[RMDB]
RNA sequence: GGGAACGACUCGAGUAGAGUCGAAAAUGCUACUUUAAUGACUUUUUCUGGUAAUGUAGAUCUUGAUGCGUUAGCUAGUGAUAUUUUUGACACUCCUAGCGUACUUCAAGCUACUCUUUCUGAGUUUAACCUGUUUAGUUCGCUAAACAGAAAAGAAACAACAACAACAAC
Reactivity to DMS in 0.01 (KOAc 150mM, MgCl2 10mM, bicine 150mM(pH8.5), 24C), signal-to-noise 9, nucleotides 027 to 129: u050g010c020u010a040c000u010u000u030a100a080u030g020a110c210u020u040u020u050u040c060u020g020g010u000a070a030u040g000u010a010g000a080u000c000u000u000g010a030u000g000c000g030u000u040a040g000c160u010a030g000u000g040a070u040a100u050u040u040u060u070g040a100c050a010c000u040c300c010u030a000g020c030g010u020a030c080u020u020c000a010a020g030c030u000a030c020u000c020u020u020u020c000u070g010a070g010u030u030u010a090a110c100
Reactivity to 2A3 in 0.01 (KOAc 150mM, MgCl2 10mM, bicine 150mM(pH8.5), 24C), signal-to-noise 9, nucleotides 027 to 129: u160g020c010u010a040c010u080u110u150a130a080u210g130a110c040u110u110u080u170u110c110u210g120g030u110a080a080u110g000u010a010g000a040u030c000u000u000g010a000u000g000c000g010u010u000a000g010c110u020a000g020u010g050a110u050a230u210u160u080u130u210g050a030c010a000c000u010c000c000u000a000g000c000g000u000a050c030u030u020c000a000a000g010c000u000a000c000u000c000u010u050u010c050u100g010a010g010u010u020u020a050a050c000